RNA sequence: GGGAACGACUCGAGUAGAGUCGAAAACGCCUGGGCGAUAUCGGAAUUGGAUCUGGCGCCGGUUUAUCUGAAUUUCGCCGAGAAUUCGCACCUGAUGGUGACUGGUCGACGCGAAUGUGGCCGCACCCGGUAUAUAUUCGUUCGCGAAUAUAUACCGAAAAGAAACAACAACAACAAC
Reactivity to DMS in 0.01 (KOAc 150mM, MgCl2 10mM, bicine 150mM(pH8.5), 24C), signal-to-noise 6, nucleotides 027 to 126: c240g010c090c010u010g010g010g000c010g010a060u010a060u000c030g020g000a070a100u010u010g010g000a060u010c050u000g010g010c040g030c030c040g000g010u000u000u000a050u000c040u010g000a070a120u000u000u000c020g010c020c020g000a230g000a060a090u000u000c050g020c040a070c030c020u000g010a110u010g010g010u000g000a070c080u000g020g010u000c020g010a220c210g010c050g010a030a050u010g010u000g000g010c010c030g000c080a080c050c030
Reactivity to 2A3 in 0.01 (KOAc 150mM, MgCl2 10mM, bicine 150mM(pH8.5), 24C), signal-to-noise 5, nucleotides 027 to 126: c060g050c010c020u050g030g020g000c020g030a030u020a020u090c030g000g080a080a080u090u140g060g030a040u040c060u090g090g000c050g030c040c020g020g010u050u070u040a060u010c030u040g060a100a110u070u080u080c040g000c000c030g020a030g040a060a120u140u090c030g000c030a070c020c020u110g090a130u160g020g030u020g050a140c080u170g040g000u000c020g080a020c010g010c000g070a060a040u100g010u040g010g000c020c010g000c000a030c020c020